[RMDB]
RNA sequence: GGGAACGACUCGAGUAGAGUCGAAAAGCUCUUCUGUUUUUGCUCCUCCUGCUUUUGCCUAUGUUGCCCGCGCCACCGGCCGGUCAGCCGUCUGGCCGUCGUCGUGGGCGGCGCAGCGGCGGUGCCGGCGGGUUGCGCUAUUCGUAGCGCAACCCGCAAAAGAAACAACAACAACAAC
Reactivity to DMS in 0.01 (KOAc 150mM, MgCl2 10mM, bicine 150mM(pH8.5), 24C), signal-to-noise 2, nucleotides 027 to 126: g000c030u010c080u010u010c060u000g000u000u000u010u000u000g030c050u010c020c020u000c040c040u000g020c060u010u000u000u000g030c010c050u020a220u010g010u000u010g030c010c020c040g030c060g020c020c050a060c130c050g030g000c010c010g010g020u000c070a150g010c140c090g010u010c010u000g010g000c000c010g020u000c070g010u000c220g020u000g010g010g020c020g000g000c070g020c030a030g010c020g000g000c030g000g030u000g020c040c060g010
Reactivity to 2A3 in 0.01 (KOAc 150mM, MgCl2 10mM, bicine 150mM(pH8.5), 24C), signal-to-noise 1, nucleotides 027 to 126: g000c000u020c020u140u060c100u130g140u070u070u010u130u150g040c020u030c000c010u020c020c000u040g040c040u110u130u150u090g030c020c000u050a050u110g020u010u040g050c000c000c010g020c040g160c020c000a010c020c020g020g070c030c040g040g030u020c010a010g060c120c090g220u100c020u000g010g000c020c000g000u010c000g010u020c000g000u060g070g000g000c020g000g010c060g000c000a000g000c000g020g050c000g020g010u050g020c030c050g050